This 177-nucleotide RNA was probed chemically with 2A3 and DMS. DMS adducts were read by reverse transcription with MarathonRT. Reactivities are rounded to 0.1 and cut off at 0 and 3. High 2A3 reactivity points to a flexible backbone, as in loops and unpaired stretches. The reactions ran in a buffer of 150 mM KOAc, 10 mM MgCl2 and 150 mM bicine (pH 8.5), at 24 C.
[RMDB]
RNA sequence: GGGAACGACUCGAGUAGAGUCGAAAACUGUCAGGACAUGAGGUGAGGAUGAAUCACAGGCUAGGUGUACAAUGGUGUGAGUAGGCCCAUUGGGUUGUGGAUCUCCCCUGGUGAACCUGCAGCACACUACCCAUGGACGGUUCGCCGUCCAUGGGUAAAAAGAAACAACAACAACAAC
Reactivity to 2A3 in 0.01 (KOAc 150mM, MgCl2 10mM, bicine 150mM(pH8.5), 24C), signal-to-noise 1, nucleotides 027 to 126: c030u040g000u090c020a010g020g020a040c020a050u040g110a060g010g000u080g040a050g010g010a080u090g060a070a060u030c040a060c020a030g010g150c020u100a050g000g190u150g030u070a070c020a070a100u040g030g090u120g000u000g060a110g120u110a060g080g070c050c030c000a040u030u040g050g000g100u070u070g040u070g030g020a040u030c000u010c000c020c000c030u040g040g030u010g050a000a020c010c000u000g000c000a000g000c030a010c000a040c060
Reactivity to DMS in 0.01 (KOAc 150mM, MgCl2 10mM, bicine 150mM(pH8.5), 24C), signal-to-noise 1, nucleotides 027 to 126: c020u000g030u010c010a000g000g030a230c050a050u000g000a020g010g020u020g000a080g010g000a020u000g010a130a060u010c030a090c020a060g020g000c060u010a090g030g010u000g010u000a130c070a040a020u000g040g000u000g010u000g020a270g000u000a060g010g010c000c000c090a040u000u000g030g000g010u000u000g050u020g000g000a060u000c020u010c030c050c000c040u000g010g080u000g000a070a060c000c000u000g000c030a050g010c090a030c110a080c170